[RMDB]
RNA sequence: GGGAACGACUCGAGUAGAGUCGAAAAUGUGGAUCCGGGUAUCAAAGCGUUUAUAGCCGUUGUCAGAGCUGCAGAACAUCAGUCAGAAAAAGCAGCGGACCAGGGUUCGUGUGCAGGAUAAGCGGGUGUCUCGCAACAUAUUCGUAUGUUGCGAGACAAAAGAAACAACAACAACAAC
Reactivity to 2A3 in 0.01 (KOAc 150mM, MgCl2 10mM, bicine 150mM(pH8.5), 24C), signal-to-noise 2, nucleotides 027 to 126: u220g000u100g000g000a110u050c000c000g080g000g000u020a030u060c040a100a040a040g020c080g010u060u020u110a060u140a050g050c060c070g120u000u040g110u040c020a110g000a040g170c000u000g000c000a060g030a160a040c040a180u240c050a030g300u170c010a020g120a060a060a030a000a000g000c000a000g000c000g030g060a010c000c000a040g000g020g010u050u060c020g110u010g000u010g020c040a030g010g100a050u000a060a020g090c050g000g080g040u020
Reactivity to DMS in 0.01 (KOAc 150mM, MgCl2 10mM, bicine 150mM(pH8.5), 24C), signal-to-noise 1, nucleotides 027 to 126: u110g000u020g010g000a070u020c050c010g000g000g000u000a020u000c110a140a080a120g020c070g000u030u010u030a110u020a100g010c030c020g020u000u010g000u000c010a040g000a080g010c000u000g000c070a160g000a150a120c220a050u020c080a080g000u050c080a090g010a080a070a050a110a080g020c010a010g000c020g000g040a140c020c050a040g000g070g010u010u040c060g010u000g000u010g000c070a010g010g010a070u010a030a040g010c080g030g040g030u010
Chemical mapping of a 177-nucleotide RNA with 2A3 and DMS. It was measured as part of the RMDB library RFM100. Values cover nucleotides 27 to 126. 2A3 adducts were read by reverse transcription with SuperScript II with manganese. For DMS the reverse transcriptase was MarathonRT. Conditions: 150 mM KOAc, 10 mM MgCl2 and 150 mM bicine (pH 8.5), 24 C.